[RMDB]
RNA sequence: GGGAACGACUCGAGUAGAGUCGAAAAGAAGGGUGAAAGCCCUUGAUACUGUAGUGGAAAUUAUAAAUAAGAAGAGUUCUGAGUUGCUUAAGCAGAACUAAAAUAAAAACACAAGCAUUAUUACAAACAUGGCGAGGUAAGUUCGCUUACCUCGCAACACCACCCUUAUCUUCGGAUAAGGGUGGUGAAAAGAAACAACAACAACAAC
Reactivity to 2A3 in 0.01 (KOAc 150mM, MgCl2 10mM, bicine 150mM(pH8.5), 24C), signal-to-noise 1, nucleotides 027 to 156: g050a000a010g020g000g000u040g080a160a060a000g020c040c000c000u000u020g020a020u080a080c030u080g050u120a020g010u020g110g090a060a110a030u110u010a150u200a300a040a030u080a120a000g060a050a000g080a060g070u000u020c060u030g080a110g110u110u160g180c060u160u110a110a000g000c000a030g000a040a000c000u030a000a020a070a020u070a030a050a000a000a020c050a000c080a010a000g020c000a020u000u080a020u090u140a260c090a020a070a030c060a120u120g080g000c020g000a000g020g000u000a000a000g000u020u070c170g000c110u000u000a000c000c000u050c000g010c000a000a000